[RMDB]
RNA sequence: GGGAACGACUCGAGUAGAGUCGAAAACCGAGGUCGCGAGACCUCGGACACUCCGAGAGGAGUGAAACUGGCCAAGUGCAGUCGCGGCGAAUGAAGCCGGCCAGCGGACGGUAGCACAUGCGAGGGAUCGCUAGCUACCGACCGAAGCGAUGCACAAGUAGCAUCAUUAGUUCGCUAAUGAUGCUACAAAAGAAACAACAACAACAAC
Reactivity to 2A3 in 0.01 (KOAc 150mM, MgCl2 10mM, bicine 150mM(pH8.5), 24C), signal-to-noise 2, nucleotides 027 to 156: c000c000g000a000g030g020u020c010g000c040g060a040g020a070c000c000u010c000g000g000a000c000a000c000u000c010c020g030a050g010a020g030g020a010g000u000g050a120a090a000c000u000g000g010c000c010a130a060g000u010g020c020a110g050u040c000g000c010g000g000c030g030a130a180u210g030a090a000g010c000c000g010g000c000c000a000g010c000g020g000a020c000g000g000u000a010g000c020a080c040a300u150g000c010g010a020g040g140g020a150u030c000g010c010u010a040g000c000u000a000c000c000g000a000c000c000g000a000a010g010c020g000a010u010g000c000a010c010a020a020
Chemical mapping of a 207-nucleotide RNA with 2A3.